[RMDB]
RNA sequence: GGGAACGACUCGAGUAGAGUCGAAAACCGCAUGCCCAGGUGGCCGCGAUCUUCAAGGCUACGGCGCGGAUAGGUCCGCGCUGAUCGUUUUCCUCCAAAGACGCUAUGGCGUCUUUCCUUCACCCGCAAAAUCGUCUCCCGUUCGCGGGAGACGAAAGGUAACGUAAGUGUUCGCACUUACGUUACCAAAAGAAACAACAACAACAAC
Reactivity to 2A3 in 0.01 (KOAc 150mM, MgCl2 10mM, bicine 150mM(pH8.5), 24C), signal-to-noise 1, nucleotides 027 to 156: c030c020g070c080a030u120g040c010c030c010a050g020g000u020g020g030c010c020g070c060g020a010u020c000u010u000c000a000a010g000g000c000u020a000c000g000g000c000g010c010g000g030a050u180a250g170g120u000c000c000g000c000g030c010u000g000a000u000c000g010u100u050u060u150c050c030u130c030c020a040a000a000g000a000c000g000c020u100a070u300g210g000c000g040u000c020u000u000u000c000c010u040u070c050a100c020c020c030g100c040a060a030a020a200u040c010g000u000c000u020c000c010c000g010u000u020c150g000c020g040g000g010a000g000a000c020g000a000a000a000